[RMDB]
Structure probing data (2A3 and DMS) for a 177-nucleotide construct.
The DMS profile rests on 10,234 reads.
RNA sequence: GGGAACGACUCGAGUAGAGUCGAAAAGAUAUGGAUAUCCUCAAAGCGUUGAAAUCGGAAACGAUGGAGCUUUGAGGAGUAUCCUAAGUCAAACCGUUCAGUAUUGCUUCGGCAAUACUGAACGGAAGAAUUAGAGUAGGUUCGCCUACUCUAAUUCAAAAGAAACAACAACAACAAC
Reactivity to 2A3 in 0.01 (KOAc 150mM, MgCl2 10mM, bicine 150mM(pH8.5), 24C), signal-to-noise 4, nucleotides 027 to 126: g000a030u050a020u150g000g000a000u000a010u020c000c000u000c010a010a000a010g010c020g300u300u080g030a040a040a010u010c010g000g050a070a050a040c000g000a010u020g010g040a010g000c000u000u000u000g010a010g000g010a000g000u000a000u000c000c000u000a070a020g050u010c060a070a040a100c000c010g000u000u010c000a010g020u000a000u010u000g010c000u060u150c300g180g000c000a020a000u000a010c010u000g000a000a000c020g000g000a000a040
Reactivity to DMS in 0.01 (KOAc 150mM, MgCl2 10mM, bicine 150mM(pH8.5), 24C), signal-to-noise 5, nucleotides 027 to 126: g000a050u000a300u010g010g000a010u000a020u000c000c000u000c000a000a010a010g010c000g010u010u020g000a080a160a020u000c000g010g000a120a090a190c010g010a010u000g000g000a140g010c000u000u000u000g000a000g000g000a010g010u000a000u000c000c000u010a030a110g010u000c030a100a110a180c000c000g000u000u000c000a010g000u000a000u000u000g000c000u000u010c250g030g010c010a000a000u000a000c000u000g000a010a000c000g010g000a010a030